This 177-nucleotide RNA was probed chemically with DMS. The data come from the RNA Mapping Database (RMDB), library TTRINS. Reactivities are rounded to 0.1 and cut off at 0 and 3.
RNA sequence: GGGAACGACUCGAGUAGAGUCGAAAAGAUAUGGAGAGGAAGUGUUACCACAUUUGACGAUAAGUUGCACUCGGAAACGAGUGGCAACUUUUGACGUCACCAUGGUAACACUUCCUCUCCUAAGUCACGAGCCUAUAAUCUUCGGAUUAUAGGCUCGAAAAGAAACAACAACAACAAC
Reactivity to DMS in 0.01 (KOAc 150mM, MgCl2 10mM, bicine 150mM(pH8.5), 24C), signal-to-noise 1, nucleotides 027 to 126: g000a030u010a300u000g000g010a030g000a020g000g030a040a000g010u000g000u000u000a010c000c000a030c290a300u020u000u010g050a050c010g000a030u000a000a000g000u000u010g000c020a060c000u020c010g000g010a160a090a120c000g000a000g020u000g000g000c000a000a000c020u000u000u000u030g020a210c090g000u000c000a020c300c300a140u000g010g000u000a000a000c000a010c000u000u000c000c000u000c000u000c000c010u000a000a040g000u000c050a270
Conditions: 150 mM KOAc, 10 mM MgCl2 and 150 mM bicine (pH 8.5), 24 C.